[RMDB]
RNA sequence: GGGAACGACUCGAGUAGAGUCGAAAAUAGCGACAUCGCCAUGGAUACCACCGUCACCCAUGCCACCAGCCAUGGCCGUGCCCACAGUGUGGAGGAGUGCAGGUGCCUGAGCCGGCAGGGCUGGGAACCACAGAGACCCUAGCAAGGAUAGAGGAGAACUGAUUAUGAGUUUCGACUCAUAAUCAGUAAAAGAAACAACAACAACAAC
Reactivity to DMS in 0.01 (KOAc 150mM, MgCl2 10mM, bicine 150mM(pH8.5), 24C), signal-to-noise 3, nucleotides 027 to 156: u010a040g030c010g020a070c060a080u020c130g030c040c030a060u020g010g010a160u000a070c020c000a110c040c030g010u000c050a110c030c020c020a090u010g000c020c000a070c010c010a140g010c010c030a100u020g020g030c040c040g030u010g010c020c000c020a080c100a090g040u030g010u010g020g030a090g030g000a090g020u000g020c040a100g010g020u010g020c040c020u030g000a080g030c000c020g000g040c050a120g020g020g000c010u000g030g020g010a030a050c040c030a070c040a110g000a130g000a020c030c020c020u000a060g000c040a050a070g000g000a080u000a050g010a120g020g010a170g020a140
Reactivity to 2A3 in 0.01 (KOAc 150mM, MgCl2 10mM, bicine 150mM(pH8.5), 24C), signal-to-noise 6, nucleotides 027 to 156: u160a020g060c040g060a070c050a080u110c070g010c030c010a040u050g030g010a060u090a150c030c030a040c060c020g060u070c030a070c010c010c020a030u090g040c020c010a080c010c010a020g010c040c010a060u060g060g000c010c020g040u130g010c000c040c010a090c060a090g080u040g030u050g160g040a060g030g030a050g020u090g030c050a030g040g030u060g040c000c020u070g030a030g020c010c010g020g020c030a040g000g040g000c010u010g000g000g020a010a030c030c010a040c040a060g050a020g030a080c020c000c010u010a020g020c040a040a010g030g000a020u060a060g040a020g030g020a040g020a050